The record gives the reactivity of an RNA of 177 nucleotides to DMS and 2A3. In probing experiments dimethyl sulfate is read out at A N1 and C N3, which are open when not base-paired. It was measured as part of the RMDB library OK1LIB. Values cover nucleotides 27 to 126. The DMS profile rests on 6,433 reads.
[RMDB]
RNA sequence: GGGAACGACUCGAGUAGAGUCGAAAAGUCAGUUAAUCUUGAAGGAGUACCAUGGAAACAACAGGAUAAAGAAAUUGUUGCUAGAAGCCUGGGAAGAUCAUUUGGAAACUUCUGUGGUCUACACGACCUAACGAUGAGCAUUCGUGCUCAUCGUUAGAAAAGAAACAACAACAACAAC
Reactivity to DMS in 0.01 (KOAc 150mM, MgCl2 10mM, bicine 150mM(pH8.5), 24C), signal-to-noise 4, nucleotides 027 to 126: g000u010c070a130g010u010u010a030a170u010c030u000u010g010a040a060g000g000a030g030u000a170c010c070a010u000g000g000a130a030a060c020a130a210c030a010g000g000a030u010a100a140a050g020a120a060a100u030u050g010u040u000g010c030u010a040g000a100a090g010c010c010u000g000g000g000a060a080g000a080u020c030a030u010u040u040g010g010a080a130a070c000u000u000c000u010g010u020g000g000u000c010u010a090c140a050c180g000a010c030
Reactivity to 2A3 in 0.01 (KOAc 150mM, MgCl2 10mM, bicine 150mM(pH8.5), 24C), signal-to-noise 4, nucleotides 027 to 126: g070u050c160a000g000u010u070a110a140u080c050u090u130g050a080a030g020g020a010g000u010a030c020c000a030u060g050g010a120a080a000c040a010a030c010a000g100g000a030u130a140a200a020g150a060a110a140u300u230g080u110u120g020c050u000a040g030a210a000g080c000c000u040g030g010g020a170a010g040a060u020c020a030u020u100u140g030g010a040a030a020c010u040u030c020u040g050u060g060g020u030c000u080a090c110a060c080g020a010c000